[RMDB]
RNA sequence: GGGAACGACUCGAGUAGAGUCGAAAAUUAAGAGCGUACGGUGGAUGCCUUGGCACCAGGAGCCGAUGAAGGACGUAGGAGGCUGCGAUAAGCCUCGGGGAGCUGUCAACCGAGCUGAGAUCCGAGGUUCCGAUAAGGGAUUCGUCCCUUAUCGGAAAAAAGAAACAACAACAACAAC
Reactivity to DMS in 0.01 (KOAc 150mM, MgCl2 10mM, bicine 150mM(pH8.5), 24C), signal-to-noise 5, nucleotides 027 to 126: u030u030a080a100g000a090g020c060g010u000a070c120g000g010u010g010g000a080u010g010c030c050u020u030g000g010c060a100c040c050a110g010g000a150g020c050c040g020a090u020g020a080a080g000g000a090c030g010u010a070g000g010a090g020g010c010u000g020c070g000a080u040a050a100g000c010c000u000c020g000g000g000g010a050g000c050u000g000u000c070a050a260c070c030g000a030g010c000u010g010a140g010a030u010c000c000g000a000g000g000
Reactivity to 2A3 in 0.01 (KOAc 150mM, MgCl2 10mM, bicine 150mM(pH8.5), 24C), signal-to-noise 4, nucleotides 027 to 126: u190u100a080a030g050a020g040c030g020u060a020c060g040g030u060g000g050a060u080g000c000c020u030u060g040g000c020a030c000c000a020g080g000a010g020c020c030g040a030u130g050a050a020g060g000a030c030g010u040a030g000g020a010g000g000c030u030g000c020g020a020u020a150a020g010c000c000u000c000g000g000g000g000a010g000c010u000g040u080c020a100a130c110c000g040a000g000c000u100g140a000g010a040u000c000c000g000a000g000g000
Chemical mapping of a 177-nucleotide RNA with DMS and 2A3. Values cover nucleotides 27 to 126. 2A3 is a SHAPE reagent: it acylates the 2'-hydroxyl of flexible nucleotides of all four kinds.